An RNA of 177 nucleotides, treated with 2A3 and DMS and read out base by base. The data come from the RNA Mapping Database (RMDB), library OK1LIB. Conditions: 150 mM KOAc, 10 mM MgCl2 and 150 mM bicine (pH 8.5), 24 C. The DMS profile rests on 1,420 reads. DMS adducts were read by reverse transcription with MarathonRT.

RNA sequence: GGGAACGACUCGAGUAGAGUCGAAAACUUGUGGUUAUCAAUCUCCUAAAUGGAUGGGGAAAUGUCCUAAUUGUGGCGCUUGGAAUCAAAUGGAGGAAAUUGUUGAAAAAGCAGCCAAUCCUAAACAUGUGACUACCUUGUUCGCAAGGUAGUCACAAAAAGAAACAACAACAACAAC
Reactivity to 2A3 in 0.01 (KOAc 150mM, MgCl2 10mM, bicine 150mM(pH8.5), 24C), signal-to-noise 1, nucleotides 027 to 126: c000u010u130g050u000g140g090u020u100a030u000c040a000a000u000c030u000c000c050u300a190a080a000u060g000g150a060u180g000g000g060g070a000a090a110u140g010u000c000c000u000a000a100u130u030g090u100g090g000c000g000c000u000u000g000g010a030a070u070c110a000a000a000u040g110g000a080g100g060a160a230a000u140u080g000u000u000g000a000a000a000a130a000g000c030a000g000c000c000a000a000u000c040c000u050a200a200a000c080a050
Reactivity to DMS in 0.01 (KOAc 150mM, MgCl2 10mM, bicine 150mM(pH8.5), 24C), signal-to-noise 1, nucleotides 027 to 126: c000u000u010g000u010g000g030u000u000a040u000c100a000a090u030c050u000c020c000u060a070a210a070u000g000g070a080u000g000g000g000g000a040a050a120u050g000u000c040c020u030a080a050u030u020g000u000g000g000c070g000c080u000u030g000g000a080a120u000c140a000a100a020u000g010g030a080g000g010a090a050a260u030u040g030u000u000g000a090a140a010a070a080g000c030a010g000c180c130a070a000u020c000c050u000a030a090a080c250a120